[RMDB]
RNA sequence: GGGAACGACUCGAGUAGAGUCGAAAAGAUAUGGACCAUGCGCAGUCGCACAGGAGGGUCUUAGGAUCGGAAACGAUCCUAAGACCUCCCCACCCUGUGAACUACGACGAGGCAUGGUCCUAAGUCACUAAGGGAACAUCUUCGGAUGUUCCCUUAGAAAAGAAACAACAACAACAAC
Reactivity to DMS in 0.01 (KOAc 150mM, MgCl2 10mM, bicine 150mM(pH8.5), 24C), signal-to-noise 2, nucleotides 027 to 126: g000a010u010a300u030g000g000a050c020c010a000u000g000c010g010c030a300g000u000c000g000c010a030c020a020g020g010a200g030g040g000u000c010u000u000a000g000g000a010u000c000g000g020a160a040a200c000g000a010u000c000c000u000a000a000g000a020c000c000u000c060c020c000c070a300c120c030c000u010g030u000g000a080a060c300u010a300c000g000a010c000g020a300g010g000c020a000u000g020g020u000c000c000u000a000a120g010u010c000a190